[RMDB]
RNA sequence: GGGAACGACUCGAGUAGAGUCGAAAAAGUGAUGAGUAAUACUGGCUGGAGCCCCAAAGAGGCACGUGUGUGUGUUUGUGUGUGUGUGUAUAUGCUUGUCAGUGCAUGCACGUGUAUGUCUGGGAGUACCAGUACUAGAGUUCGCUCUAGUACUGGUAAAAGAAACAACAACAACAAC
Reactivity to DMS in 0.01 (KOAc 150mM, MgCl2 10mM, bicine 150mM(pH8.5), 24C), signal-to-noise 5, nucleotides 027 to 126: a060g010u000g000a060u010g000a090g000u010a090a080u010a130c080u010g010g010c030u010g010g010a120g020c040c010c010c040a040a100a070g000a110g000g010c010a010c010g020u000g020u000g010u000g010u000g010u010u010u010g020u000g000u010g020u000g020u010g010u000g020u010a070u030a050u010g000c020u010u010g010u030c050a050g000u000g000c010a010u000g010c010a010c030g010u000g010u000a040u020g010u000c040u000g010g000g010a140g030u010
Reactivity to 2A3 in 0.01 (KOAc 150mM, MgCl2 10mM, bicine 150mM(pH8.5), 24C), signal-to-noise 7, nucleotides 027 to 126: a000g100u090g050a090u080g020a020g050u110a050a070u060a190c040u020g040g000c010u030g040g020a030g020c010c010c000c000a030a160a010g050a040g040g000c000a000c020g000u010g000u000g000u000g000u010g040u030u090u080g060u060g000u010g000u000g000u000g000u000g060u020a070u060a020u250g060c060u070u080g080u160c040a030g020u020g070c010a000u000g010c000a000c000g020u010g000u020a080u090g140u010c020u030g010g000g020a060g020u010
Source: RMDB libraries RFM100 and RFMREP, as collected in RNAgym. The record gives the reactivity of an RNA of 177 nucleotides to DMS and 2A3. For DMS the reverse transcriptase was MarathonRT. The reactions ran in a buffer of 150 mM KOAc, 10 mM MgCl2 and 150 mM bicine (pH 8.5), at 24 C. Reactivities are given for positions 27 through 126.